[RMDB]
The data come from the RNA Mapping Database (RMDB), library M2RFPK. The record gives the reactivity of an RNA of 207 nucleotides to 2A3 and DMS.

RNA sequence: GGGAACGACUCGAGUAGAGUCGAAAACGCACUCGCAGCUUAAUAACCUGCGCUGAGCCCUUCUCCCCCAGCUUGCCUGUGUCCUACGGAAUUGGAAGGUCAUCCUUCACAGGAUCGUGUGGAAGUCAUUACUCGUGAGUGUUCGCACUCACGAGAACAAAUUCAAAUUGUUCGCAAUUUGAAUUUGAAAAGAAACAACAACAACAAC
Reactivity to 2A3 in 0.01 (KOAc 150mM, MgCl2 10mM, bicine 150mM(pH8.5), 24C), signal-to-noise 4, nucleotides 027 to 156: c060g020c010a030c030u040c030g010c010a000g000c010u050u050a050a030u070a080a040c000c010u010g000c010g050c220u050g020a060g010c010c020c000u160u110c110u050c020c000c010c010c010a020g020c030u040u100g030c000c000u050g030u010g020u100c010c010u050a060c040g020g040a060a070u080u060g050g020a050a020g000g020u080c030a120u160c010c000u060u030c040a060c010a150g040g010a050u080c070g020u070g010u050g100g020a030a000g020u040c020a090u030u180a090c010u000c010g000u000g000a000g000u000g030u020u090c160g030c070a000c000u000c010a000c000g000a000g000a000a000
Reactivity to DMS in 0.01 (KOAc 150mM, MgCl2 10mM, bicine 150mM(pH8.5), 24C), signal-to-noise 4, nucleotides 027 to 156: c040g010c030a120c030u000c030g030c030a030g000c030u000u010a130a120u000a130a070c240c000u000g010c010g020c130u000g030a070g000c020c030c060u000u000c080u010c010c010c000c010c020a110g010c050u000u000g000c030c020u010g010u000g010u000c010c010u000a230c070g010g000a080a180u000u010g030g000a080a040g030g030u000c100a160u000c010c010u010u000c030a120c080a060g030g010a070u000c030g000u000g000u000g010g010a090a200g020u000c050a090u000u000a140c010u000c010g030u000g010a020g030u010g040u000u010c270g020c010a030c010u000c000a010c000g010a010g020a050a120
2A3 adducts were read by reverse transcription with SuperScript II with manganese.